The record gives the reactivity of an RNA of 177 nucleotides to DMS and 2A3. Source: RMDB library TTRDEL, as collected in RNAgym. DMS adducts were read by reverse transcription with MarathonRT. The DMS profile rests on 6,905 reads.
RNA sequence: GGGAACGACUCGAGUAGAGUCGAAAAGAUAUGGAAAUGGACAACAGCGUGGGUGUCGGAAACGACAUUACGACAUGUUCCAUUUCCUAAGUCAAAACCCUAGUCAUACUUCGGUAUGACUAGGGAAGUUUAUAGGUGUGUUCGCACACCUAUAAACAAAAGAAACAACAACAACAAC
Reactivity to DMS in 0.01 (KOAc 150mM, MgCl2 10mM, bicine 150mM(pH8.5), 24C), signal-to-noise 5, nucleotides 027 to 126: g010a040u000a300u010g010g000a010a000a010u000g000g000a050c080a040a050c100a070g000c010g010u010g010g030g010u000g000u000c010g000g000a080a070a180c010g010a020c000a000u000u000a020c000g000a110c110a090u000g000u000u010c000c000a020u000u000u000c000c000u000a010a040g010u000c030a110a070a110a120c000c000c000u000a000g010u000c000a000u000a000c000u000u000c190g020g010u000a000u000g000a010c000u000a000g000g000g000a000a010
Reactivity to 2A3 in 0.01 (KOAc 150mM, MgCl2 10mM, bicine 150mM(pH8.5), 24C), signal-to-noise 6, nucleotides 027 to 126: g000a000u030a010u090g000g000a010a000a000u010g000g020a030c070a250a020c040a210g140c050g040u050g110g150g040u020g000u000c000g010g010a020a040a010c010g010a000c000a000u000u050a030c040g130a120c090a200u100g030u090u030c010c000a000u000u000u020c000c000u000a020a000g010u000c010a010a050a080a270c000c000c000u000a000g010u000c000a010u000a010c010u030u070c300g070g000u000a000u010g010a000c000u000a000g000g000g000a000a010